[RMDB]
RNA sequence: GGGAACGACUCGAGUAGAGUCGAAAAGAUAUGGACGCACACCAUCAUUAUCACGCUUUUGACGCUUCCUACUCGGAAACGAGUAGCGAAGCGAUAAGCGUAUAAUGAUGGUGUGCGUCCUAAGUCAUCUGCAUGUAAAGUUCGCUUUACAUGCAGAAAAAGAAACAACAACAACAAC
Reactivity to DMS in 0.01 (KOAc 150mM, MgCl2 10mM, bicine 150mM(pH8.5), 24C), signal-to-noise 2, nucleotides 027 to 126: g010a040u000a300u000g000g010a020c000g030c000a020c000a020c000c000a000u010c010a000u000u010a000u010c300a020c000g000c000u020u000u000u010g000a250c070g000c000u000u000c000c010u000a000c000u010c000g000g000a110a110a180c000g010a000g020u000a010g000c260g020a000a010g000c000g000a010u000a020a010g010c000g020u000a010u010a000a000u000g010a020u000g010g010u000g000u000g000c000g010u000c000c000u000a010a070g010u000c030a170
Conditions: 150 mM KOAc, 10 mM MgCl2 and 150 mM bicine (pH 8.5), 24 C.
Chemical mapping of a 177-nucleotide RNA with DMS.
For DMS, 3,331 sequencing reads were counted.
It was measured as part of the RMDB library TTRINS.
For DMS the reverse transcriptase was MarathonRT.